RNA sequence: GGGAACGACUCGAGUAGAGUCGAAAACGACGAUUCGUCGUCGGGCGACCGUAGGGCAUUGACAUGAUCGGACCUAAGACAGUGGCUUCGAAAGAGGCCAUCGAGGAAUCCGAUCAACAGCAAUGCCCUAAACGGAACAGUCAACCUUCGGGUUGAAAUUUUUAUAGUUCUUCGGAACUAUAAAAAUAAAAGAAACAACAACAACAAC
Reactivity to DMS in 0.01 (KOAc 150mM, MgCl2 10mM, bicine 150mM(pH8.5), 24C), signal-to-noise 3, nucleotides 027 to 156: c020g010a020c000g040a040u000u000c280g020u000c040g010u000c000g000g010g000c060g040a130c000c010g000u000a040g000g020g030c000a020u000u000g000a080c070a300u000g000a040u000c010g010g010a130c020c020u020a130a180g010a200c290a050g000u000g000g010c000u000u000c000g020a180a150a250g010a040g000g000c010c010a010u000c000g000a110g030g020a100a100u000c000c000g010a040u000c000a000a020c100a150g000c010a020a010u000g010c010c000c000u000a000a020a040c020g010g000a300a070c050a130g000u000c000a030a010c000c000u000u000c300g020g020g040u000u000g010a000a040
Reactivity to 2A3 in 0.01 (KOAc 150mM, MgCl2 10mM, bicine 150mM(pH8.5), 24C), signal-to-noise 2, nucleotides 027 to 156: c010g010a000c000g020a020u080u130c180g050u020c000g000u020c020g120g060g030c090g100a080c020c000g010u000a020g000g000g020c000a000u000u010g010a230c070a110u040g000a000u000c010g000g020a020c020c010u090a160a100g080a030c080a080g070u030g010g010c000u000u000c010g050a130a050a070g000a000g000g000c000c010a000u030c020g020a010g030g000a100a210u030c010c000g000a000u000c000a000a000c000a000g010c000a000a000u020g000c010c000c000u010a000a010a000c020g000g000a080a010c020a070g100u010c000a010a030c010c000u060u120c260g090g000g000u000u020g000a020a020
The record gives the reactivity of an RNA of 207 nucleotides to DMS and 2A3. For DMS, 5,353 sequencing reads were counted. 2A3 adducts were read by reverse transcription with SuperScript II with manganese. For 2A3, 1,864 sequencing reads were counted.